[RMDB]
RNA sequence: GGGAACGACUCGAGUAGAGUCGAAAAGAUAUGGAGGUCCCAUAAGCAACAGCGUCGGGUCGGAAACGACCCUGACGACAUGCUUACGGGACCUCCUAAGUCAAAAUCAGCAACUUCGGUUGCUGAACUCACUGAUAACCUUCGGGUUAUCAGUGAGAAAAGAAACAACAACAACAAC
Reactivity to 2A3 in 0.01 (KOAc 150mM, MgCl2 10mM, bicine 150mM(pH8.5), 24C), signal-to-noise 1, nucleotides 027 to 126: g010a020u070a040u150g000g000a000g000g000u000c070c020c000a010u030a010a030g000c040a010a170c120a160g030c000g000u000c010g000g020g040u000c030g070g000a130a030a080c020g000a000c000c030c020u050g010a000c000g040a010c000a030u080g000c010u000u020a000c010g000g000g000a000c000c000u020c010c000u000a010a000g000u000c000a000a000a030a230u040c000a000g040c000a000a000c020u140u150c300g190g000u000u000g010c000u000g010a000a030
Reactivity to DMS in 0.01 (KOAc 150mM, MgCl2 10mM, bicine 150mM(pH8.5), 24C), signal-to-noise 2, nucleotides 027 to 126: g000a050u000a300u000g000g000a050g020g000u000c010c010c000a030u000a000a010g020c000a030a100c270a290g000c010g000u000c010g030g000g000u000c000g020g000a100a180a270c010g010a010c000c000c000u000g030a000c000g010a060c120a220u000g010c010u000u000a000c070g000g010g000a000c000c000u000c000c000u000a000a030g010u000c040a050a070a180a230u000c000a020g000c000a010a000c000u000u040c170g000g010u000u000g010c000u000g000a050a140